About this RNA: The data come from the RNA Mapping Database (RMDB), library OK2TST. Structure probing data (2A3 and DMS) for a 177-nucleotide construct. DMS adducts were read by reverse transcription with MarathonRT. 2A3 adducts were read by reverse transcription with SuperScript II with manganese. For 2A3, 1,021 sequencing reads were counted. The DMS profile rests on 1,413 reads.
RNA sequence: GGGAACGACUCGAGUAGAGUCGAAAAGCAUCACGCGCAAUACCGAUUCGUUUCUGGAUGCGAGUCAGUAAGGUCUCGUCCCUACUCGCGGGCGUGGUCCAGGGCGCUGCGAAUCAGAGUGGUGACGAUACCCGGUCCUAUUCGUAGGACCGGGUAUAAAAGAAACAACAACAACAAC
Reactivity to 2A3 in 0.01 (KOAc 150mM, MgCl2 10mM, bicine 150mM(pH8.5), 24C), signal-to-noise 1, nucleotides 027 to 126: g060c010a000u070c040a030c080g150c050g000c020a020a000u030a140c030c030g000a050u010u040c000g000u060u080u080c040u010g060g010a050u090g010c010g000a010g020u070c070a010g010u180a150a060g110g050u040c050u010c100g070u090c000c000c000u050a030c010u040c060g080c080g000g040g000c020g040u100g030g090u000c000c050a030g000g010g060c050g010c090u170g040c010g090a040a070u100c000a020g070a030g080u050g030g010u010g000a020c020g030
Reactivity to DMS in 0.01 (KOAc 150mM, MgCl2 10mM, bicine 150mM(pH8.5), 24C), signal-to-noise 1, nucleotides 027 to 126: g020c040a050u000c080a030c030g000c010g020c090a100a160u000a080c010c030g000a020u000u000c020g020u000u000u000c060u030g000g020a090u020g000c000g010a030g030u010c040a060g000u010a040a070g010g000u000c080u010c060g030u010c040c060c030u010a050c060u000c080g000c100g000g000g000c010g000u020g010g020u000c040c020a110g010g000g000c150g000c060u000g000c020g000a040a050u010c110a090g000a100g020u000g000g010u000g000a060c070g010